Chemical mapping of a 177-nucleotide RNA with 2A3 and DMS.

RNA sequence: GGGAACGACUCGAGUAGAGUCGAAAAUUUUUGUACCUUCCCCUUUUGAAUUUUCCAUCGUAUAAGCCUCAGAAAUUUGGUAGACACUUAAUGAUGAAUAGGUUGGGUUAGAUUUGAUUUGAGAUCUUAAUGGUACUUAAUUCGUUAAGUACCAUUAAAAAGAAACAACAACAACAAC
Reactivity to 2A3 in 0.01 (KOAc 150mM, MgCl2 10mM, bicine 150mM(pH8.5), 24C), signal-to-noise 2, nucleotides 027 to 126: u030u030u010u020u160g070u100a080c000c000u000u050c010c000c020c030u000u130u050u170g110a110a110u000u040u100u090c040c040a070u050c030g000u090a010u020a190a040g020c000c040u080c010a020g070a110a270a150u030u040u000g000g060u090a020g010a040c040a000c080u060u090a000a000u090g120a010u050g080a190a050u130a140g040g020u020u080g070g030g000u080u060a090g000a170u150u170u000g040a140u050u000u110g060a100g000a030u030c000u000
Reactivity to DMS in 0.01 (KOAc 150mM, MgCl2 10mM, bicine 150mM(pH8.5), 24C), signal-to-noise 7, nucleotides 027 to 126: u010u020u020u010u030g010u010a130c050c050u000u000c010c000c010c090u010u000u010u010g030a080a080u010u000u010u000c030c020a060u010c060g020u010a070u010a100a110g010c050c030u000c060a060g010a090a080a080u000u010u010g010g000u010a050g010a080c090a040c040u000u000a040a050u000g000a080u010g010a060a060u010a040g010g010u000u000g000g000g010u010u010a040g000a100u000u010u000g010a090u000u010u000g000a100g000a080u010c050u000